[RMDB]
RNA sequence: GGGAACGACUCGAGUAGAGUCGAAAAAAAGAUAUGGACUACGGAACUACUUCGUAGUGUAACUUGGAUUUACGUUUCGGAAACGAAACGUUGUCAGUUACACGCGAAGCCGUAGUCCUAAGUCAAAGCUAGUGUUAGUGUUCGCACUAACACUAGCAAAAGAAACAACAACAACAAC
Reactivity to DMS in 0.01 (KOAc 150mM, MgCl2 10mM, bicine 150mM(pH8.5), 24C), signal-to-noise 2, nucleotides 027 to 126: a130a040a080g020a060u010a300u010g000g000a030c000u000a010c000g010g000a080a040c090u030a300c000u000u000c020g040u000a100g040u000g010u000a000a010c010u010u000g010g010a010u000u030u000a010c000g010u000u010u000c000g000g010a110a060a220c010g000a000a020a000c010g020u000u000g010u000c010a030g020u000u000a010c000a000c010g010c000g000a020a000g000c010c000g040u000a000g000u000c000c000u000a010a070g010u000c050a130a100a110
Reactivity to 2A3 in 0.01 (KOAc 150mM, MgCl2 10mM, bicine 150mM(pH8.5), 24C), signal-to-noise 4, nucleotides 027 to 126: a010a010a020g080a030u080a050u170g000g010a000c000u000a000c010g040g000a070a050c070u170a050c020u300u000c000g060u120a300g000u060g000u000a000a010c010u110u240g240g030a070u300u280u180a010c000g010u010u000u020c020g000g030a070a070a090c000g000a000a000a010c000g020u000u020g000u000c020a000g000u000u000a000c010a000c010g000c000g000a000a000g000c000c000g000u000a000g000u010c000c000u000a000a010g000u000c020a000a100a040
Structure probing data (DMS and 2A3) for a 177-nucleotide construct.
For 2A3, 7,542 sequencing reads were counted.
The reactions ran in a buffer of 150 mM KOAc, 10 mM MgCl2 and 150 mM bicine (pH 8.5), at 24 C.
Source: RMDB library TTRDES, as collected in RNAgym.